An RNA of 207 nucleotides, treated with 2A3 and DMS and read out base by base. Values are in units of 0.01, from 0 to 300, in steps of 10. The reactions ran in a buffer of 150 mM KOAc, 10 mM MgCl2 and 150 mM bicine (pH 8.5), at 24 C. Reactivities are given for positions 27 through 156.
[RMDB]
RNA sequence: GGGAACGACUCGAGUAGAGUCGAAAAAAAACCAUUCGAGCUAGUCAAUGCGUGGCGUGUCUCUCCGCAGCGUGUUGGCGAAUGUAAAGAGUGACUAAGCAUGUAGUACUGAGGAUGUAGUAAUUUUGAAACUCGCGCAUCUUCGGAUGCGCGAGAACAUUUAACAGGUGUUCGCACCUGUUAAAUGAAAAGAAACAACAACAACAAC
Reactivity to 2A3 in 0.01 (KOAc 150mM, MgCl2 10mM, bicine 150mM(pH8.5), 24C), signal-to-noise 3, nucleotides 027 to 156: a000a000a000a000c050c010a040u070u080c050g010a030g020c030u060a010g050u020c000a000a000u020g010c010g010u040g120g000c010g020u040g050u030c030u030c020u020c070c000g000c010a030g000c000g000u010g010u000u000g000g010c000g000a010a010u040g010u070a020a060a030g030a010g010u020g020a010c040u070a070a030g070c030a070u060g050u130a070g050u040a100c070u060g030a020g030g040a060u090g000u030a050g030u040a070a230u050u110u110u170g100a080a090a070c000u010c000g000c000g000c000a000u010c000u020u030c150g060g000a000u000g000c030g000c000g000a000g000a000a000
Reactivity to DMS in 0.01 (KOAc 150mM, MgCl2 10mM, bicine 150mM(pH8.5), 24C), signal-to-noise 1, nucleotides 027 to 156: a040a010a030a040c080c020a080u000u000c040g000a160g030c040u000a140g020u000c030a050a010u000g000c030g020u000g010g030c010g030u000g010u010c080u010c040u000c200c000g040c030a080g000c000g030u000g040u010u000g010g000c000g020a060a060u010g030u000a090a060a110g010a080g040u000g010a070c060u000a040a120g010c020a060u010g020u000a060g010u000a060c050u000g020a060g010g010a080u000g010u000a040g020u010a050a110u000u010u010u000g000a100a060a120c000u000c010g000c000g000c000a000u010c000u000u000c250g030g010a000u010g040c000g020c000g010a000g000a030a150